[RMDB]
An RNA of 207 nucleotides, treated with 2A3 and DMS and read out base by base. Conditions: 150 mM KOAc, 10 mM MgCl2 and 150 mM bicine (pH 8.5), 24 C.
RNA sequence: GGGAACGACUCGAGUAGAGUCGAAAAGGCACCGGAUGUCAUCACGUUGUUGCAGUACCAGAUGGCAUCUUAAAUCCGAUCUGCAAAUAAGCAUGUAGAAAGCUGAUGUGGGCUUUAGCUGGACGGGGGAAUACAGGCAACUUCGGUUGCCUGUAAACUCUUAACUCAUGUUCGCAUGAGUUAAGAGAAAAGAAACAACAACAACAAC
Reactivity to 2A3 in 0.01 (KOAc 150mM, MgCl2 10mM, bicine 150mM(pH8.5), 24C), signal-to-noise 1, nucleotides 027 to 156: g040g000c080a040c070c000g000g000a010u030g000u000c000a020u010c020a000c090g030u040u030g020u030u040g030c050a030g060u110a080c070c000a040g000a030u000g000g000c010a000u000c000u010u030a050a050a000u030c010c030g070a080u030c040u020g030c010a020a040a080u150a050a000g060c060a060u070g030u070a040g130a110a050a020g020c030u030g020a090u080g080u110g030g020g000c000u030u120u080a050g000c010u110g010g000a040c030g000g000g000g000g000a050a000u050a010c000a000g000g000c010a020a000c000u040u050c070g090g000u000u000g000c000c010u000g000u010a010a000a000
Reactivity to DMS in 0.01 (KOAc 150mM, MgCl2 10mM, bicine 150mM(pH8.5), 24C), signal-to-noise 2, nucleotides 027 to 156: g050g010c020a090c040c010g020g000a170u000g030u020c000a020u000c030a270c200g000u000u010g050u020u000g000c000a100g000u000a100c050c010a160g000a050u000g010g040c010a020u010c010u000u000a050a080a110u000c050c020g030a060u020c030u020g000c010a040a060a110u000a060a070g010c040a140u000g020u010a100g010a060a050a090g020c030u000g010a100u010g030u000g020g010g020c070u000u000u000a050g000c050u000g030g010a060c040g000g010g010g000g000a070a200u000a020c000a000g020g000c010a000a010c010u000u000c260g040g000u000u000g020c000c000u010g000u000a000a050a110

It was measured as part of the RMDB library M2RFPK.
For 2A3, 1,103 sequencing reads were counted.